RNA sequence: GGGAACGACUCGAGUAGAGUCGAAAAGCCGCACGGGCGCAGUGCUGCGCGAGACUUCUUUGGCCUUGAUGUUACGGACAAAUUCCGUAACCGUGUGAGGCCAACAUCAAAGAUGCGUACCUAGCUGCGUUUCAACCUGCGUGGGUUGAGGCGGCUUCAAGCUGAUCCUGUUCGCAGGAUCAGCUUGAAAAGAAACAACAACAACAAC
Reactivity to 2A3 in 0.01 (KOAc 150mM, MgCl2 10mM, bicine 150mM(pH8.5), 24C), signal-to-noise 2, nucleotides 027 to 156: g010c000c000g030c020a050c160g160g130g000c000g030c010a000g040u020g080c040u010g010c020g000c020g020a040g080a160c020u030u030c030u000u060u040g000g000c000c000u050u060g050a090u110g040u000u000a000c000g020g010a040c100a170a300a280u300u040c000c000g000u000a000a000c020c020g140u120g090u100g100a000g000g000c000c010a000a010c000a000u080c000a000a020a040g020a070u140g000c000g000u010a060c060c060u030a010g010c010u020g030c010g000u000u060u000c010a010a020c000c000u160g120c170g120u300g000g060g000u010u000g010a040g030g010c000g000g000c000u040u010